RNA sequence: GGGAACGACUCGAGUAGAGUCGAAAAAUUCACGAUUUUUGGGGUUGUUUAACAAGUAUAAGUACUUCUCUGGUGCUAUGGAAACAGCCGCUUAUCGUGAAGCUGCAGCAUGUCAUCUUGCUAAAGCGGUAACACAUGUGUUCGCACAUGUGUUACCAAAAGAAACAACAACAACAAC
Reactivity to DMS in 0.01 (KOAc 150mM, MgCl2 10mM, bicine 150mM(pH8.5), 24C), signal-to-noise 1, nucleotides 027 to 126: a220u000u000c000a000c000g000a060u000u000u060u000u000g010g010g030g000u000u010g010u000u000u000a090a050c060a090a190g050u000a000u000a210a030g000u000a020c170u000u020c280u020c220u000g010g020u010g000c000u000a050u000g000g020a040a020a060c010a000g000c000c000g000c020u000u000a050u010c020g000u000g010a040a020g020c070u000g010c300a040g000c000a020u000g000u010c090a090u010c070u000u000g030c080u020a020a180a000g010c100
Reactivity to 2A3 in 0.01 (KOAc 150mM, MgCl2 10mM, bicine 150mM(pH8.5), 24C), signal-to-noise 1, nucleotides 027 to 126: a000u010u000c000a000c000g000a010u000u070u090u110u090g070g010g040g000u030u000g000u000u030u030a110a030c040a060a000g010u030a060u010a170a030g020u030a090c050u200u150c060u010c150u270g030g010u000g000c030u020a040u170g020g000a040a000a000c000a000g010c000c060g090c090u000u010a010u000c000g010u000g000a020a000g000c000u010g000c000a020g000c000a010u000g040u220c090a160u070c090u080u050g080c030u050a120a000a000g000c040